[RMDB]
RNA sequence: GGGAACGACUCGAGUAGAGUCGAAAACUUUAAUCCAACAAUUCUACUUCCAGGCAUUUACACAAAAGAAAUGAAAACAUGUCAUCAAAAAUAUUUGCACUCAAAUAAAUGGUCACAGUGUCAAAAAGUGGAGUGUUCACUUCGGUGAACAUUCUACAAAAGAAACAACAACAACAAC
Reactivity to DMS in 0.01 (KOAc 150mM, MgCl2 10mM, bicine 150mM(pH8.5), 24C), signal-to-noise 5, nucleotides 027 to 126: c070u020u030u070a070a060u010c040c040a080a110c110a080a090u010u000c040u010a060c040u000u000c030c040a050g010g000c050a020u010u000u020a070c060a090c140a030a060a060a100g000a080a050a060u020g000a100a050a080a080c100a050u000g000u000c060a050u010c020a020a050a040a100a100u020a010u000u010u010g000c060a070c040u030c030a010a020a070u010a040a080a110u020g000g000u010c070a040c070a050g000u000g000u020c050a020a050a040a090a070
Reactivity to 2A3 in 0.01 (KOAc 150mM, MgCl2 10mM, bicine 150mM(pH8.5), 24C), signal-to-noise 9, nucleotides 027 to 126: c030u130u130u190a060a040u070c030c010a040a040c040a080a130u100u080c030u090a100c030u070u030c020c010a030g040g000c020a060u040u080u120a100c090a020c030a030a100a030a040g140a060a120a050u110g040a040a050a060a050c050a050u100g030u060c010a050u030c030a060a040a040a110a040u060a090u070u050u040g010c050a040c030u090c030a040a070a050u130a040a110a050u130g020g010u020c010a020c010a070g060u040g050u140c060a060a050a020a030a020
This 177-nucleotide RNA was probed chemically with DMS and 2A3. The RNA was probed in 150 mM KOAc, 10 mM MgCl2 and 150 mM bicine (pH 8.5) at 24 C. The DMS profile rests on 9,183 reads. It was measured as part of the RMDB library OK1LIB.